[RMDB]
RNA sequence: GGGAACGACUCGAGUAGAGUCGAAAAUAGAAUAAGGCUAUUUACUGGAAACUCCUUAUUUUCGCUUACUACUGCUCCAGCACCUACAAUAGAGUUUUUGCCUAUCUUGGCACCAUUUAAAAUAGUAAUGAUAUGGUCGAUUCGUCGACCAUAUCAUAAAAGAAACAACAACAACAAC
Reactivity to 2A3 in 0.01 (KOAc 150mM, MgCl2 10mM, bicine 150mM(pH8.5), 24C), signal-to-noise 6, nucleotides 027 to 126: u090a030g080a030a020u110a090a020g020g000c020u040a070u110u160u080a100c130u130g090g060a040a100a060c060u070c000c010u020u040a030u050u050u030u080c060g020c040u050u100a020c010u030a020c000u020g010c000u000c000c020a020g020c050a030c000c020u050a040c050a100a160u120a140g100a100g070u070u010u030u080u120g060c020c010u090a150u150c090u070u020g010g000c020a020c010c020a040u110u130u250a100a230a160a110u150a070g080u120a100
Reactivity to DMS in 0.01 (KOAc 150mM, MgCl2 10mM, bicine 150mM(pH8.5), 24C), signal-to-noise 2, nucleotides 027 to 126: u000a030g010a050a020u000a120a080g000g000c060u010a060u010u000u000a160c070u040g000g000a050a040a130c090u000c000c050u000u000a070u000u030u030u000c080g000c090u000u000a060c160u020a030c020u000g010c010u010c010c010a050g020c050a090c010c050u000a090c080a010a080u020a060g000a070g020u000u000u050u010u050g010c040c020u000a070u020c120u010u000g020g010c020a120c140c050a040u000u000u040a020a040a060a060u020a080g000u020a100

An RNA of 177 nucleotides, treated with 2A3 and DMS and read out base by base. It was measured as part of the RMDB library OK1LIB. DMS adducts were read by reverse transcription with MarathonRT. 2A3 is a SHAPE reagent: it acylates the 2'-hydroxyl of flexible nucleotides of all four kinds.